[RMDB]
RNA sequence: GGGAACGACUCGAGUAGAGUCGAAAAACGAGAGUUCGCUCUCGUAAAAAGCGUACUACCCUUAGAGGUCCGGUACGACGAAGGGAUCCCAAAUAGGAUCCCAGAGUACGGGACUACCCACCUAAGGGUAUCGCAAAAAUCCGCCUUCGGGCGGAAACUUACCAACUGGAUUCGUCCAGUUGGUAAGAAAAGAAACAACAACAACAAC
Reactivity to DMS in 0.01 (KOAc 150mM, MgCl2 10mM, bicine 150mM(pH8.5), 24C), signal-to-noise 1, nucleotides 027 to 156: a010c000g040a060g010a000g020u000u020c300g030c000u000c020u000c000g030u000a020a050a120a140a030g030c000g000u010a120c160u000a050c000c000c000u000u000a020g020a210g020g000u000c010c070g000g000u000a000c010g020a200c090g000a140a200g000g040g010a020u000c000c020c000a080a070a230u000a040g000g020a010u020c010c000c000a010g020a300g000u000a000c000g000g060g030a020c020u020a000c000c000c050a300c150c030u000a050a010g020g020g030u000a000u000c060g060c000a000a060a040a040a100u000c000c020g000c010c000u010u000c300g010g040g000c000g000g020a030a000a020
Reactivity to 2A3 in 0.01 (KOAc 150mM, MgCl2 10mM, bicine 150mM(pH8.5), 24C), signal-to-noise 1, nucleotides 027 to 156: a010c010g000a010g020a000g020u150u160c220g080c090u000c020u000c000g020u000a070a010a040a020a000g010c010g010u070a100c070u000a010c010c010c010u000u000a020g010a030g010g030u010c030c060g120g000u000a010c020g040a070c090g020a200a220g000g000g000a000u000c060c040c000a150a120a040u170a080g000g010a000u000c000c020c000a010g010a000g000u010a020c040g040g000g000a010c030u060a080c070c020c010a040c010c000u000a000a010g000g050g000u020a020u020c020g000c000a000a000a000a000a120u000c010c000g010c000c000u070u090c230g130g000g020c000g000g000a010a010a010
An RNA of 207 nucleotides, treated with DMS and 2A3 and read out base by base. The 2A3 profile rests on 1,285 reads. The RNA was probed in 150 mM KOAc, 10 mM MgCl2 and 150 mM bicine (pH 8.5) at 24 C. DMS adducts were read by reverse transcription with MarathonRT. 2A3 adducts were read by reverse transcription with SuperScript II with manganese. Reactivities are given for positions 27 through 156.